[RMDB]
RNA sequence: GGGAACGACUCGAGUAGAGUCGAAAAGAUGGGGCUGCUGUGCCUCAUUUGUGUCAUAUGGUGGCAUAGAGCAAAAGGCUAUGUCUACGCUCGGUGUUCUCAGUCCAUGAACACUCAGAAUGAUUAGGGAUUGUAAAUAUUUCGAUAUUUACAAUCCAAAAGAAACAACAACAACAAC
Reactivity to 2A3 in 0.01 (KOAc 150mM, MgCl2 10mM, bicine 150mM(pH8.5), 24C), signal-to-noise 9, nucleotides 027 to 126: g030a000u010g010g000g010g000c020u120g040c110u170g220u220g080c020c000u000c000a000u010u020u040g060u020g020u010c010a030u060a060u230g120g000u020g010g000c010a000u010a010g020a020g030c090a060a060a100a040g140g000c000u020a010u070g020u000c040u080a020c040g030c030u040c030g000g000u010g000u040u000c040u010c030a060g110u020c050c020a060u100g010a030a000c010a010c010u040c010a070g070a170a080u090g050a110u100u170a120g100
Reactivity to DMS in 0.01 (KOAc 150mM, MgCl2 10mM, bicine 150mM(pH8.5), 24C), signal-to-noise 9, nucleotides 027 to 126: g010a010u000g000g000g010g020c000u010g020c220u010g010u020g010c000c000u000c000a000u000u000u000g010u010g010u000c050a050u010a090u010g010g020u000g010g000c010a010u000a030g000a030g010c060a090a110a130a150g010g000c000u010a020u010g000u010c010u010a050c170g010c050u000c100g010g020u000g000u000u000c020u000c140a120g010u020c120c100a100u010g000a030a020c020a010c020u010c130a090g000a140a060u010g000a090u010u020a120g010